[RMDB]
RNA sequence: GGGAACGACUCGAGUAGAGUCGAAAAGAUAUGGACCAGUCACUAGCUAGCACUGACUUCGGAAACGAAGUCCGUGCUUGGACCUAGUGAGCUGGUCCUAAGUCAAACCAAUAGUUCGCUAUUGGAAGUUUGUAUCAUGCUUCGGCAUGAUACAAACAAAAGAAACAACAACAACAAC
Reactivity to DMS in 0.01 (KOAc 150mM, MgCl2 10mM, bicine 150mM(pH8.5), 24C), signal-to-noise 1, nucleotides 027 to 126: g000a070u000a300u020g000g000a010c010c010a000g010u010c000a000c010u000a000g000c050u010a030g030c000a010c000u000g000a030c000u000u000c000g010g020a090a210a220c000g000a020a010g000u000c000c240g000u000g000c020u000u010g050g050a110c300c030u000a000g020u010g000a070g060c000u020g010g000u000c000c000u010a010a070g000u000c030a180a130a240c000c000a000a030u000a010g000u000u010c300g020c010u000a000u000u020g000g000a090a040